The record gives the reactivity of an RNA of 177 nucleotides to DMS and 2A3.
In probing experiments dimethyl sulfate is read out at A N1 and C N3, which are open when not base-paired.
The RNA was probed in 150 mM KOAc, 10 mM MgCl2 and 150 mM bicine (pH 8.5) at 24 C.
For DMS the reverse transcriptase was MarathonRT.
2A3 adducts were read by reverse transcription with SuperScript II with manganese.
RNA sequence: GGGAACGACUCGAGUAGAGUCGAAAAGCUGAGGUGGGAGGAUCAUUUGAGCCAGGGAGAUGGAGGCUGCAGUGACCCAUGAUCGCACCACUGCAGCUGUGAUCAUCAUCAUCCAGCCUGGGUGACAGUUUCUACUAGGUUUCGACCUAGUAGAAACAAAAGAAACAACAACAACAAC
Reactivity to DMS in 0.01 (KOAc 150mM, MgCl2 10mM, bicine 150mM(pH8.5), 24C), signal-to-noise 6, nucleotides 027 to 126: g000c050u010g000a070g020g020u000g010g000g010a060g010g000a060u000c040a050u010u000u020g010a100g010c040c020a060g010g010g010a100g010a050u000g010g020a170g000g010c010u000g000c010a000g010u000g000a150c080c020c040a100u010g000a080u010c070g000c080a130c120c000a020c020u000g000c010a010g020c010u000g000u000g000a070u010c070a060u000c050a110u000c030a070u010c020c020a110g010c050c050u010g000g000g010u000g000a060c180a090
Reactivity to 2A3 in 0.01 (KOAc 150mM, MgCl2 10mM, bicine 150mM(pH8.5), 24C), signal-to-noise 2, nucleotides 027 to 126: g020c030u040g020a020g010g050u070g030g040g000a040g010g020a050u050c040a060u070u100u220g070a030g020c030c030a050g060g050g040a140g020a040u050g050g010a030g000g030c000u010g010c010a010g010u010g020a060c010c000c010a050u130g060a120u120c030g000c040a020c030c000a010c020u000g000c000a010g010c010u010g030u030g010a040u050c040a010u010c010a030u010c010a020u000c020c000a030g080c010c060u060g000g000g030u020g030a010c020a050